[RMDB]
RNA sequence: GGGAACGACUCGAGUAGAGUCGAAAAGAUAUGGACCAUGGAGUGGAGAGGACGAUGAAAAAGCCUGGGUCUCGGAAACGAGACCCAGGCUUUGGAGUCCUUAACCACGUUGAAAUGGUCCUAAGUCCAAUACGUGAGAGUUCGCUCUCACGUAUUGAAAAGAAACAACAACAACAAC
Reactivity to DMS in 0.01 (KOAc 150mM, MgCl2 10mM, bicine 150mM(pH8.5), 24C), signal-to-noise 2, nucleotides 027 to 126: g010a130u000a300u000g000g000a020c010c000a020u010g010g000a120g000u000g000g040a300g020a030g000g030a010c000g000a120u020g010a120a100a010a000a000g030c000c020u000g000g030g030u000c000u030c000g040g000a130a060a220c030g000a030g000a030c020c000c000a010g000g020c000u000u000u000g000g010a070g000u000c000c000u000u000a050a110c020c000a000c000g010u000u000g000a190a170a000u000g000g020u020c000c000u000a010a070g000u010c040
Chemical mapping of a 177-nucleotide RNA with DMS. The reactions ran in a buffer of 150 mM KOAc, 10 mM MgCl2 and 150 mM bicine (pH 8.5), at 24 C. The data come from the RNA Mapping Database (RMDB), library TTRINS. Values cover nucleotides 27 to 126.